RNA sequence: GGGAACGACUCGAGUAGAGUCGAAAAUAGGCGAACGAGAGGCCCUCUCUUGUGCGGAGUUGUCACGCUGACAUAAUUGUUAUGAUGUCCGAUUCCGGUAGCAUCGCGGCGAUGUUUUCAUAGGACAUCUUAUGAACCCAAGUGCUUCGGGGAAGCAGCAUAUUAGUGAUUUCGAUCACUAAUAUGCAAAAGAAACAACAACAACAAC
Reactivity to 2A3 in 0.01 (KOAc 150mM, MgCl2 10mM, bicine 150mM(pH8.5), 24C), signal-to-noise 4, nucleotides 027 to 156: u220a030g030g010c030g010a020a030c020g000a030g000a000g080g000c040c000c000u070c010u010c000u030u080g040u070g030c040g010g020a060g040u090u080g040u130c020a030c080g050c070u040g030a020c020a050u180a070a120u180u110g040u080u110a070u140g020a010u010g020u000c010c000g010a050u120u010c080c000g030g040u060a010g000c000a010u030c020g020c070g190g050c120g030a020u010g010u000u110u030u100c050a050u080a050g010g010a020c010a020u000c000u010u050a060u070g050a020a030c000c000c010a050a040g050u040g050c000u030u060c060g030g010g010g000a010a000g030c030a010
Reactivity to DMS in 0.01 (KOAc 150mM, MgCl2 10mM, bicine 150mM(pH8.5), 24C), signal-to-noise 4, nucleotides 027 to 156: u010a130g010g010c020g020a040a030c020g020a060g000a100g020g000c060c050c040u010c030u000c020u010u010g020u010g020c020g010g010a180g000u000u000g000u010c020a110c080g020c060u000g000a100c030a060u000a070a120u010u000g000u010u000a070u010g020a050u000g010u000c000c020g020a270u010u000c060c050g040g030u000a030g020c010a020u000c020g020c120g030g010c090g010a050u000g000u010u000u000u000c080a090u010a140g010g000a050c040a030u000c000u000u000a050u000g020a070a100c050c040c030a060a080g010u000g010c020u000u000c040g020g010g070g000a110a030g020c050a130